[RMDB]
Conditions: 150 mM KOAc, 10 mM MgCl2 and 150 mM bicine (pH 8.5), 24 C. The record gives the reactivity of an RNA of 207 nucleotides to 2A3 and DMS. Reactivities are rounded to 0.1 and cut off at 0 and 3. It was measured as part of the RMDB library OK3TST. For 2A3, 1,029 sequencing reads were counted.
RNA sequence: GGGAACGACUCGAGUAGAGUCGAAAAUACUCAUAGAAAGGUUGCGUCUAGCACUACACAAUAUGAUCACAAAGAAAGCUGUAAUGGUUUAUAUUACCAGGGUUCUUGUUAUAUAUUACAUUCAGACUAUAAGUCAUUCGAGGAUGCUAAAGCAAACCUACCACUUCUGAUUCGUCAGAAGUGGUAGAAAAGAAACAACAACAACAAC
Reactivity to 2A3 in 0.01 (KOAc 150mM, MgCl2 10mM, bicine 150mM(pH8.5), 24C), signal-to-noise 2, nucleotides 027 to 156: u080a020c010u020c070a040u140a160g140a040a130a030g060g000u020u040g020c020g020u010c030u060a020g030c030a000c030u160a040c010a000c030a030a110u080a080u130g030a020u110c030a030c040a100a070a060g120a120a160a010g080c040u060g030u220a070a030u010g010g000u040u160u020a030u010a000u010u040a010c030c000a010g130g090g050u260u230c000u000u000g000u030u000a040u000a010u000a010u020u070a050c000a000u010u030c010a010g010a040c000u040a020u040a290a000g020u000c020a020u040u070c050g060a030g070g000a020u030g010c000u020a080a010a020g000c010a040a050a030c040
Reactivity to DMS in 0.01 (KOAc 150mM, MgCl2 10mM, bicine 150mM(pH8.5), 24C), signal-to-noise 1, nucleotides 027 to 156: u000a120c070u000c010a130u010a110g000a040a070a140g010g020u000u000g000c020g030u000c010u020a060g010c000a070c020u020a140c010a120c000a000a110u020a030u010g000a050u000c040a140c100a070a050a190g010a160a130a100g020c040u000g060u000a050a070u000g000g000u000u000u000a010u000a040u050u000a020c060c100a040g020g000g020u000u010c020u000u000g020u000u000a020u000a010u020a020u020u000a040c000a050u000u010c000a010g020a100c040u000a120u010a030a140g000u010c040a050u000u000c050g010a220g000g000a110u000g020c020u010a020a010a090g040c050a020a080a120c140